[RMDB]
RNA sequence: GGGAACGACUCGAGUAGAGUCGAAAACGGCCACAUGCAAAUGAAAGCUCUAGGAAUCCUCAGUAUGCUACAAGAUAGCAUGCUAUUCACCACAAAGACCAAACUUAAGCCCAACAUGCCAAUAAUACACCCCGGAGCAGCUGGACAUUAUGGUCAGUAAAUCAAACACGUUCGCGUGUUUGAUUUAAAAAGAAACAACAACAACAAC
Reactivity to DMS in 0.01 (KOAc 150mM, MgCl2 10mM, bicine 150mM(pH8.5), 24C), signal-to-noise 2, nucleotides 027 to 156: c080g010g030c000c000a070c030a050u000g020c060a140a080a040u020g020a090a120a090g010c030u000c030u010a100g030g020a080a120u000c050c040u010c080a100g030u000a010u000g010c000u000a060c000a100a110g030a300u000a030g010c010a010u000g010c010u010a090u000u000c060a080c040c020a110c050a110a050a090g000a070c000c020a020a090a100c090u000u000a070a110g030c040c000c010a050a040c050a050u000g030c030c020a050a140u010a080a090u000a090c030a020c070c030c000c030g000g000a040g010c020a060g020c030u000g000g010a060c060a040u010u000a090u000g020g010u000c000a090g000
Reactivity to 2A3 in 0.01 (KOAc 150mM, MgCl2 10mM, bicine 150mM(pH8.5), 24C), signal-to-noise 3, nucleotides 027 to 156: c010g020g030c000c020a050c010a060u070g020c020a040a090a080u100g050a160a100a020g000c000u020c060u080a070g000g050a090a110u050c000c010u030c010a000g010u010a020u010g000c000u010a010c010a090a040g010a180u020a010g010c000a020u010g000c000u030a050u050u150c060a070c110c000a020c040a050a090a100g030a070c010c050a030a020a090c010u060u100a050a030g030c040c010c010a050a040c030a040u060g020c010c010a080a000u060a150a010u060a060c040a080c030c010c010c030g030g000a010g000c010a030g010c010u040g000g020a020c010a030u050u130a040u130g020g000u040c040a030g030